This 177-nucleotide RNA was probed chemically with DMS. Values cover nucleotides 27 to 126.

[RMDB]
RNA sequence: GGGAACGACUCGAGUAGAGUCGAAAAGUUGCCCGAGAAGAGAUCACACAGAUGAGACACAAGGAGCGAUGUCUCAUCACUUGGUUAUCGACAAGUGACGAGUCGUUCCCAAAAUCGCUCCAAUGAAGGUUUUCAACAUAUUCGUAUGUUGAAAACCAAAAGAAACAACAACAACAAC
Reactivity to DMS in 0.01 (KOAc 150mM, MgCl2 10mM, bicine 150mM(pH8.5), 24C), signal-to-noise 1, nucleotides 027 to 126: g010u000u000g010c040c010c080g030a070g000a240a010g010a090g010a040u020c060a060c120a060c240a090g010a010u000g010a000g000a010c000a000c110a090a140g000g000a020g030c000g000a120u000g000u020c000u020c030a020u000c000a060c030u010u000g010g030u000u000a020u000c030g020a090c030a090a160g010u000g000a110c010g000a030g000u000c000g040u000u010c000c000c030a000a010a070a050u000c000g010c010u000c010c000a090a020u000g010a110a020